[RMDB]
RNA sequence: GGGAACGACUCGAGUAGAGUCGAAAAUUAAACCGGGAGCCGAAGCGCAACGGCGACCGGAAGGGCGACGGCAACCCGAAUCUCAACCCGGAGCCCAAGCGCAAGAGAAACGGGAAGCGCAAAAAAACAUAUGAACUCGAUUCGUCGAGUUCAUAUGAAAAGAAACAACAACAACAAC
Reactivity to 2A3 in 0.01 (KOAc 150mM, MgCl2 10mM, bicine 150mM(pH8.5), 24C), signal-to-noise 1, nucleotides 027 to 126: u030u010a080a010a040c020c000g000g010g000a010g010c020c010g040a180a020g070c020g000c040a040a050c030g000g000c000g010a000c000c000g000g020a020a100g000g000g000c000g000a070c010g040g070c010a030a120c000c020c020g010a050a110u100c090u000c100a000a050c010c010c000g010g010a020g000c000c000c000a020a000g090c050g000c030a070a050g080a020g000a170a040a050c040g000g000g100a040a050g030c050g000c110a080a000a070a000a000a000a070
Reactivity to DMS in 0.01 (KOAc 150mM, MgCl2 10mM, bicine 150mM(pH8.5), 24C), signal-to-noise 2, nucleotides 027 to 126: u000u000a090a090a090c010c000g000g000g000a250g000c020c000g040a080a130g040c040g020c030a270a240c030g010g020c000g000a140c020c010g010g000a050a020g000g000g000c010g010a100c080g010g010c150a040a050c000c010c030g000a030a180u000c070u000c090a090a090c060c000c020g000g000a290g000c000c020c010a060a030g030c090g000c090a040a050g010a020g040a070a040a160c090g000g010g010a040a050g010c000g060c020a010a000a010a020a110a100a040
The record gives the reactivity of an RNA of 177 nucleotides to 2A3 and DMS. For DMS, 956 sequencing reads were counted. For 2A3 the reverse transcriptase was SuperScript II with manganese. The RNA was probed in 150 mM KOAc, 10 mM MgCl2 and 150 mM bicine (pH 8.5) at 24 C.